[RMDB]
RNA sequence: GGGAACGACUCGAGUAGAGUCGAAAAUGAAACUAGACGUUGAUGUGGACGUUACAUGGUAUGAUCCGAAUUGGCUACUCGAAAAGAAGUUGGCACUCCUUCACGCCCUAGGCUACAGAGAGGAGAAAGCUUGGUGGGAGUUAUCACCCUCUGGAAACUCAUCAUAUGAGUUCGCUCAUAUGAUGAGAAAAGAAACAACAACAACAAC
Reactivity to 2A3 in 0.01 (KOAc 150mM, MgCl2 10mM, bicine 150mM(pH8.5), 24C), signal-to-noise 5, nucleotides 027 to 156: u110g030a040a010a030c040u040a040g020a060c020g020u030u060g060a130u090g040u050g050g030a020c040g030u060u040a050c070a080u090g020g060u140a090u130g050a070u070c040c020g030a090a080u050u030g040g000c020u030a010c010u040c070g030a030a020a050a060g070a030a030g030u070u060g040g000c020a030c060u030c010c000u030u060c050a020c070g020c000c000c020u050a080g080g000c010u060a040c010a030g080a000g010a040g070g010a040g040a060a050a010g010c050u050u040g020g010u010g010g040g000a030g010u040u030a050u050c030a040c040c000c010u020c010u030g040g010a030a020a020
Reactivity to DMS in 0.01 (KOAc 150mM, MgCl2 10mM, bicine 150mM(pH8.5), 24C), signal-to-noise 3, nucleotides 027 to 156: u010g010a170a090a150c040u000a090g010a080c050g020u000u000g020a140u000g010u000g020g010a050c040g020u000u010a090c080a120u000g020g000u000a030u010g020a080u010c010c030g000a050a130u000u000g010g010c020u010a060c030u000c030g000a090a080a110a130g000a050a070g040u000u000g030g040c060a140c030u000c020c010u000u000c060a130c090g040c010c020c040u000a090g030g010c030u000a130c040a040g010a070g020a070g000g000a100g010a050a110a090g010c040u000u000g010g030u000g030g000g010a100g000u000u010a150u000c020a050c010c010c000u000c010u010g010g000a140a060a100

Record summary:
Conditions: 150 mM KOAc, 10 mM MgCl2 and 150 mM bicine (pH 8.5), 24 C. Chemical mapping of a 207-nucleotide RNA with 2A3 and DMS. It was measured as part of the RMDB library OK3TST.